[RMDB]
RNA sequence: GGGAACGACUCGAGUAGAGUCGAAAAACCUCGAACGCACUUUCGCGCUCGUCGAGAAGCACUGCAGCGACAAGGCUCUCGACAUUCUCGACAGCCUCACCGAGAAGGCGUGGAACGACUUCGUCGAGGCGUGGGGCAAGGACGGUGGCCUCAUCGAAAUCUGUGACUUUUUCGAAAGUCACAGAUUAAAAGAAACAACAACAACAAC
Reactivity to DMS in 0.01 (KOAc 150mM, MgCl2 10mM, bicine 150mM(pH8.5), 24C), signal-to-noise 2, nucleotides 027 to 156: a080c010c010u000c020g010a060a030c060g050c050a110c100u010u000u000c010g010c040g000c030u020c180g000u000c000g000a110g020a120a080g030c010a120c040u000g010c050a250g060c260g000a170c040a110a080g010g030c030u000c010u000c010g010a090c010a230u000u000c000u010c000g020a100c020a100g020c040c010u000c020a160c110c010g000a130g000a060a030g010g000c010g060u030g000g010a040a080c050g020a040c030u000u000c040g000u010c060g010a060g020g000c000g060u000g010g010g000g000c040a080a050g030g010a080c020g000g030u000g000g000c030c020u020c010a100u000c050g010a070
Reactivity to 2A3 in 0.01 (KOAc 150mM, MgCl2 10mM, bicine 150mM(pH8.5), 24C), signal-to-noise 4, nucleotides 027 to 156: a020c020c010u050c030g090a160a060c060g040c060a030c020u010u030u030c020g000c000g000c010u030c060g020u000c000g010a000g020a120a080g010c040a070c200u050g000c080a220g110c070g140a150c060a030a080g030g000c010u010c000u010c000g000a010c010a040u030u010c010u000c010g020a020c030a060g020c010c010u030c020a020c000c010g010a000g010a020a020g020g000c020g010u020g010g030a070a040c080g150a080c100u090u060c040g030u030c080g000a000g000g000c010g010u010g000g000g000g000c020a050a040g100g040a020c090g030g080u060g050g010c010c020u010c020a030u080c030g040a030
An RNA of 207 nucleotides, treated with DMS and 2A3 and read out base by base. Reactivities are given for positions 27 through 156. Conditions: 150 mM KOAc, 10 mM MgCl2 and 150 mM bicine (pH 8.5), 24 C. 2A3 adducts were read by reverse transcription with SuperScript II with manganese.